Chemical mapping of a 207-nucleotide RNA with 2A3 and DMS.
The DMS profile rests on 3,302 reads.
The RNA was probed in 150 mM KOAc, 10 mM MgCl2 and 150 mM bicine (pH 8.5) at 24 C.
It was measured as part of the RMDB library M2RFPK.

[RMDB]
RNA sequence: GGGAACGACUCGAGUAGAGUCGAAAAGUUCCCUCUUAGCGUGGAGGUUUAACUACGCUCGUUCCCCAUAUCGGUGUGGGCGCACCGGAUUUAUAAAUCAAAGUCCUUUAGGGACCGGAAAGGAACAAAAAUCCAUGGGAGUUCGCUCCCAUGGAAACAGGAAAUAUUGCUUCGGCAAUAUUUCCUGAAAAGAAACAACAACAACAAC
Reactivity to 2A3 in 0.01 (KOAc 150mM, MgCl2 10mM, bicine 150mM(pH8.5), 24C), signal-to-noise 1, nucleotides 027 to 156: g020u020u010c000c000c000u000c010u010u080a010g000c000g010u020g010g060a070g010g050u070u280u110a060a060c050u060a000c000g000c000u000c000g000u000u000c010c010c000c000a010u060a000u170c010g000g020u010g000u030g030g040g000c040g010c060a000c000c020g020g010a010u030u250u060a190u150a090a070a040u090c140a020a000a050g010u020c000c010u030u000u050a060g010g000g030a020c020c000g010g030a100a070a030g020g000a020a030c030a010a120a040a000a030u020c000c000a000u000g000g020g000a010g020u060u070c050g070c110u000c000c010c000a000u000g000g060a000a000a000
Reactivity to DMS in 0.01 (KOAc 150mM, MgCl2 10mM, bicine 150mM(pH8.5), 24C), signal-to-noise 2, nucleotides 027 to 156: g030u000u000c030c000c000u000c040u010u000a030g040c020g120u000g010g000a120g000g020u000u000u000a090a080c010u010a000c020g000c010u000c020g020u000u000c010c000c010c090a290u010a050u000c020g000g020u000g030u020g010g020g050c090g020c000a010c010c030g040g010a190u000u000u010a140u000a070a070a090u000c080a070a150a050g000u000c010c000u000u000u000a200g020g010g010a140c020c030g000g020a110a110a150g020g030a100a220c040a010a120a120a100a220u010c000c000a030u000g000g000g010a000g070u000u000c300g010c000u000c000c000c000a020u000g000g000a000a020a070